The data come from the RNA Mapping Database (RMDB), library OK3TST. An RNA of 207 nucleotides, treated with 2A3 and DMS and read out base by base. The RNA was probed in 150 mM KOAc, 10 mM MgCl2 and 150 mM bicine (pH 8.5) at 24 C. The 2A3 profile rests on 1,059 reads. DMS adducts were read by reverse transcription with MarathonRT. 2A3 adducts were read by reverse transcription with SuperScript II with manganese.

RNA sequence: GGGAACGACUCGAGUAGAGUCGAAAAAAUGUAGUUGAAGUAAGAUCAGCGUAAAUGCCUUGUAGAGCCUUCAACCCAGACUAUUUUAGCAAGUGAAGCUGCUAGAAGCAAAACAGGCAGGAAAAAGUAUAGCAAAAAUAUGGAAAAGUCUAAUUCCCCAAGGAAGAUAGUUCGCUAUCUUCCUUGGAAAAGAAACAACAACAACAAC
Reactivity to 2A3 in 0.01 (KOAc 150mM, MgCl2 10mM, bicine 150mM(pH8.5), 24C), signal-to-noise 2, nucleotides 027 to 156: a000a010u150g010u120a070g010u010u020g010a080a010g040u120a020a090g010a130u190c050a010g010c000g010u010a030a120a030u090g010c010c010u060u040g040u070a100g010a020g100c010c000u010u030c020a020a030c020c030c020a050g010a050c070u050a170u040u080u120u110a060g000c030a070a010g030u140g100a080a040g050c000u020g000c050u070a020g020a070a030g070c030a000a000a070a000c070a040g090g000c020a010g040g010a040a070a010a000a000g090u090a170u140a090g000c000a000a230a040a020a020u140a080u110g040g020a060a030a070a000g000u000c000u070a140a190u110u050c000c020
Reactivity to DMS in 0.01 (KOAc 150mM, MgCl2 10mM, bicine 150mM(pH8.5), 24C), signal-to-noise 1, nucleotides 027 to 156: a050a060u010g000u010a030g000u010u000g010a020a110g020u010a080a100g000a120u000c020a110g030c020g000u010a090a060a130u010g000c020c040u000u000g060u010a130g060a210g050c100c010u010u020c030a050a100c060c040c040a220g010a100c100u010a070u000u010u010u000a040g010c030a040a130g000u010g000a100a220g020c100u050g010c050u050a080g010a020a080g070c100a050a060a100a050c000a070g060g000c040a070g000g020a010a030a060a040a090g020u000a090u020a050g020c030a020a000a090a080a060u010a080u010g020g000a050a150a080a100g020u000c090u000a060a220u040u000c010c000